[RMDB]
RNA sequence: GGGAACGACUCGAGUAGAGUCGAAAAAAGCUUCAAUGGCAACGUCAUCAUGCUGUCGACGAACUGUCAGCAUUAUACUAUGAAUACUGGGGUGAAGUUGAGCACCGAGGCAGAACUUAUAGCGUUAACUGGGUGGAUUAUUCGUAAUCCACCCAGUAAAAGAAACAACAACAACAAC
Reactivity to DMS in 0.01 (KOAc 150mM, MgCl2 10mM, bicine 150mM(pH8.5), 24C), signal-to-noise 2, nucleotides 027 to 126: a060a030g000c050u000u000c100a080a100u000g010g010c000a020a050c060g010u000c040a040u000c060a050u010g010c030u000g000u020c020g020a060c200g010a110a130c150u000g020u000c000a010g020c050a020u000u000a070u000a130c050u000a040u000g030a070a030u020a100c170u000g000g020g000g030u020g000a020a020g020u000u000g000a080g030c020a050c080c070g000a020g010g000c000a080g000a050a040c020u000u020a070u000a050g010c120g020u000u000a040